Structure probing data (2A3) for a 207-nucleotide construct. The reactions ran in a buffer of 150 mM KOAc, 10 mM MgCl2 and 150 mM bicine (pH 8.5), at 24 C. It was measured as part of the RMDB library OK3TST.

RNA sequence: GGGAACGACUCGAGUAGAGUCGAAAACAAAUUUGGAGGUUUUCACGCAGAUGUCAGUGCAUUCAACCCAACUGUCUGGAAUCUAAUGAAGACACAUAUUGUACCGGAUGGUGACAUACUUACACACUCAUUGACCUACAAUGACACACAGGUGGUCCUGAGCAUCCUUGUUCGCAAGGAUGCUCAGAAAAGAAACAACAACAACAAC
Reactivity to 2A3 in 0.01 (KOAc 150mM, MgCl2 10mM, bicine 150mM(pH8.5), 24C), signal-to-noise 2, nucleotides 027 to 156: c010a000a130a000u180u140u160g030g000a100g020g070u020u000u180u120c140a140c090g010c100a100g010a060u040g030u090c030a010g000u020g020c020a040u050u070c040a050a090c000c040c030a000a040c010u030g060u120c020u000g090g000a080a180u040c040u050a150a000u160g060a140a050g130a010c040a000c010a020u140a070u120u220g030u030a040c000c040g000g040a000u010g010g000u060g010a060c060a020u080a000c000u080u110a010c050a000c010a010c030u030c040a000u060u080g040a080c020c000u120a080c090a080a080u080g000a000c000a000c000a010c040a220g150g010u040g000g000u050c000